[RMDB]
RNA sequence: GGGAACGACUCGAGUAGAGUCGAAAAAGAGCCGAACCGGGAAGAGGAAGCGCCCGAGAGGGAGCCAAUGCCAAAGAGGUGGGGAUCGUCGGAAGGUAUCGUCCCAAUGACCAAGAGAAGGGAAGAAAUGCGUUGACGUUCGCGUCAACGAAAAGAAACAACAACAACAAC
Reactivity to 2A3 in 0.01 (KOAc 150mM, MgCl2 10mM, bicine 150mM(pH8.5), 24C), signal-to-noise 4, nucleotides 027 to 129: a000g050a010g010c020c020g010a060a040c040c000g020g010g010a050a050g000a030g010g020a030a000g030c030g040c000c000c010g080a070g010a020g020g000g000a000g010c000c010a050a090u230g030c010c020a030a100a020g050a010g000g000u090g030g020g010g010a020u040c000g030u020c010g030g020a000a040g000g000u050a070u120c050g030u020c010c010c000a010a070u160g020a020c020c040a020a000g000a000g010a040a020g030g000g000a000a000g030a020a010a020u170g030
Reactivity to DMS in 0.01 (KOAc 150mM, MgCl2 10mM, bicine 150mM(pH8.5), 24C), signal-to-noise 3, nucleotides 027 to 129: a000g030a100g030c050c000g050a070a100c020c010g020g010g050a080a070g000a040g030g030a120a040g040c000g000c140c040c040g010a090g010a000g050g000g010a040g010c140c110a070a100u040g040c000c000a100a090a080g010a050g030g020u050g000g000g000g000a000u020c030g030u020c070g010g020a040a050g040g040u040a040u000c130g000u020c000c020c020a070a080u070g020a030c060c100a080a130g000a040g030a030a080g040g040g020a000a000g020a080a100a110u090g000